[RMDB]
Source information
Source: RMDB library RNAMAK, as collected in RNAgym. Chemical mapping of a 207-nucleotide RNA with DMS and 2A3. For 2A3, 5,234 sequencing reads were counted. For DMS the reverse transcriptase was MarathonRT.
RNA sequence: GGGAACGACUCGAGUAGAGUCGAAAAGGGGUCAGCCUAAGACAGGCGUUGACAUGAUCGGUGUACUGAAGCCUCCACGGUACACGAUCAACAGCAACGCUCGAGGCUGACGGAGGCACCCAAAACCCAAUUUAGAGAUUCGUCUCUAAAUUGGGAACCACCUACAUAGUUUCGACUAUGUAGGUGGAAAAGAAACAACAACAACAAC
Reactivity to DMS in 0.01 (KOAc 150mM, MgCl2 10mM, bicine 150mM(pH8.5), 24C), signal-to-noise 1, nucleotides 027 to 156: g000g060g000g000u000c070a060g000c020c020u000a240a110g020a120c300a040g000g000c020g050u000u010g000a070c030a280u010g000a010u000c010g040g010u000g070u000a020c000u000g010a010a150g000c010c000u010c010c010a210c040g030g040u010a030c000a010c000g020a000u000c010a100a180c150a140g020c040a010a090c000g040c070u000c010g000a030g010g050c010u000g010a080c040g030g020a010g140g050c020a120c000c000c000a100a120a150a220c000c000c000a010a010u000u000u000a000g000a000g010a040u000u000c300g000u000c000u000c000u020a000a010a000u000u010g020g040g000a010a010
Reactivity to 2A3 in 0.01 (KOAc 150mM, MgCl2 10mM, bicine 150mM(pH8.5), 24C), signal-to-noise 3, nucleotides 027 to 156: g160g020g060g020u000c010a000g020c000c000u070a110a000g010a000c010a010g000g030c010g020u000u010g040a180c150a300u300g010a020u000c080g170g080u040g010u040a000c010u020g030a110a050g010c000c000u000c010c010a020c020g000g010u010a000c010a010c010g000a000u000c020a050a200c080a110g010c000a000a000c000g000c010u020c010g010a000g000g000c000u000g000a000c000g000g000a000g000g000c010a020c010c010c010a060a150a140a150c000c000c000a000a000u000u000u000a010g010a000g000a010u030u130c230g080u010c120u000c000u000a010a000a000u000u000g000g000g000a000a020